The record gives the reactivity of an RNA of 177 nucleotides to DMS and 2A3. The reactions ran in a buffer of 150 mM KOAc, 10 mM MgCl2 and 150 mM bicine (pH 8.5), at 24 C. 2A3 adducts were read by reverse transcription with SuperScript II with manganese. The data come from the RNA Mapping Database (RMDB), library M2PK90. Reactivities are given for positions 27 through 126. The DMS profile rests on 14,137 reads.

[RMDB]
RNA sequence: GGGAACGACUCGAGUAGAGUCGAAAAUCAUUGGCUUCGCUGCGCGCUGCGUUGCCUAGGCUUCAGAUGCUUCGUACUGUUGCCAACCUUGCAAUUUCCAAACGCUAAUGCGAAAGUGUGCAAACAACUAAUACCGUAGGUUCGCCUACGGUAUUAGAAAAGAAACAACAACAACAAC
Reactivity to DMS in 0.01 (KOAc 150mM, MgCl2 10mM, bicine 150mM(pH8.5), 24C), signal-to-noise 9, nucleotides 027 to 126: u010c110a100u000u010g010g010c010u000u000c020g010c010u010g010c040g010c070g010c020u010g010c030g020u000u000g010c010c030u010a130g010g010c020u000u000c020a040g010a130u010g010c130u010u010c130g010u010a100c040u010g010u000u000g010c010c020a090a110c120c090u010u010g010c110a060a100u000u000u000c030c030a060a090a180c060g010c020u010a070a120u010g020c020g000a070a070a050g010u000g020u000g010c050a110a070a100c180a060a140
Reactivity to 2A3 in 0.01 (KOAc 150mM, MgCl2 10mM, bicine 150mM(pH8.5), 24C), signal-to-noise 9, nucleotides 027 to 126: u120c030a030u030u120g010g000c010u020u010c010g010c050u120g010c020g010c000g000c020u010g000c010g030u010u010g010c000c010u020a070g020g000c000u020u010c010a040g040a250u110g080c050u120u150c080g060u090a060c020u010g020u040u010g000c000c010a030a020c070c040u020u110g030c040a070a140u020u040u040c020c010a050a040a040c030g010c040u180a210a050u230g020c030g080a110a030a010g030u040g010u010g030c020a020a070a060c050a030a030